[RMDB]
RNA sequence: GGGAACGACUCGAGUAGAGUCGAAAAGAAAACACUGGCGAGCCUGAAGUUGGCGAUAUGAUCAUUUUUCAGCUUCAGGCGGAGAAGUGGAAUCACGCGGGGAUUUACGUUGGAAAUAACAACAUCCUUCAUCACGCAUAUGGCAAGCUGUCUCGCCUGUUAAUUCAAGAUUCGUCUUGAAUUAACAAAAAGAAACAACAACAACAAC
Reactivity to DMS in 0.01 (KOAc 150mM, MgCl2 10mM, bicine 150mM(pH8.5), 24C), signal-to-noise 2, nucleotides 027 to 156: g000a100a050a080a090c020a020c010u020g000g020c110g020a140g030c030c000u010g020a030a050g010u000u000g040g020c260g020a040u000a040u020g030a120u020c130a170u000u000u000u010u000c000a030g010c000u010u000c040a020g040g000c020g000g010a140g000a070a040g020u000g010g000a140a100u000c060a010c050g040c050g010g000g020g000a130u000u000u000a030c070g000u010u010g000g010a090a140a160u000a070a100c070a050a060c050a140u000c000c010u020u010c050a090u000c040a040c040g010c050a120u000a150u010g020g000c010a050a090g040c010u000g010u000c000u000c010g010c140c050
Reactivity to 2A3 in 0.01 (KOAc 150mM, MgCl2 10mM, bicine 150mM(pH8.5), 24C), signal-to-noise 4, nucleotides 027 to 156: g050a000a060a010a010c050a010c040u030g050g000c050g020a040g000c000c010u000g000a000a000g000u000u010g010g030c070g020a030u030a140u220g160a110u140c100a070u070u030u030u090u040c000a010g000c000u000u000c000a000g000g000c010g000g000a010g010a020a010g010u050g010g060a010a050u100c040a000c100g020c050g000g020g030g020a010u060u060u230a070c030g020u010u010g040g050a120a110a130u190a160a050c060a000a020c000a060u040c010c000u030u050c040a100u100c030a020c040g010c010a030u070a060u160g000g020c010a010a060g000c020u040g060u130c020u030c040g000c000c010
This 207-nucleotide RNA was probed chemically with DMS and 2A3. Conditions: 150 mM KOAc, 10 mM MgCl2 and 150 mM bicine (pH 8.5), 24 C. DMS adducts were read by reverse transcription with MarathonRT. 2A3 adducts were read by reverse transcription with SuperScript II with manganese. The data come from the RNA Mapping Database (RMDB), library OK3TST. For 2A3, 2,987 sequencing reads were counted.